This 207-nucleotide RNA was probed chemically with DMS and 2A3. The RNA was probed in 150 mM KOAc, 10 mM MgCl2 and 150 mM bicine (pH 8.5) at 24 C.

[RMDB]
RNA sequence: GGGAACGACUCGAGUAGAGUCGAAAAGGCUUUUCGGUGGGAUGGGAUACAUUGGGAAUUCUGGCCGAGGAACAAAUCCUUCCUCGCGGCUAGACACGGAUUGCACGCCUUUCGGCAAGGGAUAGUUUUCUAUUCCGCACCGUGCCCUGUUGUGGCAGUUCUUCAUAUAGUUCGCUAUAUGAAGAACAAAAGAAACAACAACAACAAC
Reactivity to DMS in 0.01 (KOAc 150mM, MgCl2 10mM, bicine 150mM(pH8.5), 24C), signal-to-noise 2, nucleotides 027 to 156: g000g020c070u010u000u000u000c050g000g030u000g000g100g050a140u010g000g010g010a180u000a050c080a100u010u010g020g000g020a110a140u000u000c000u000g020g040c020c000g000a020g040g030a060a300c050a110a120a120u010c120c300u010u020c000c010u010c000g010c000g120g010c000u000a040g010a050c080a080c030g000g010a180u010u000g020c030a070c060g020c010c000u000u000u000c020g050g030c030a140a280g000g020g040a020u000a010g010u000u000u000u000c000u000a020u000u000c030c020g040c140a040c020c010g030u000g000c000c020c000u000g000u000u020g040u010g010g070c000a090
Reactivity to 2A3 in 0.01 (KOAc 150mM, MgCl2 10mM, bicine 150mM(pH8.5), 24C), signal-to-noise 5, nucleotides 027 to 156: g030g020c030u080u080u060u140c080g030g010u100g020g020g050a140u160g030g010g020a030u080a150c060a110u080u150g030g010g050a070a150u060u010c010u020g000g000c010c000g010a000g000g010a010a020c060a090a190a070u110c020c010u010u030c000c000u010c000g070c060g010g010c010u010a000g010a010c000a000c000g040g030a100u100u140g000c020a010c030g020c000c000u080u220u190c130g000g010c030a030a040g010g000g000a010u010a020g030u070u110u140u000c010u000a010u010u000c010c030g000c010a010c000c000g020u020g010c000c010c010u030g010u010u010g010u020g040g000c030a030
Source: RMDB library ARCHII, as collected in RNAgym.
For 2A3 the reverse transcriptase was SuperScript II with manganese.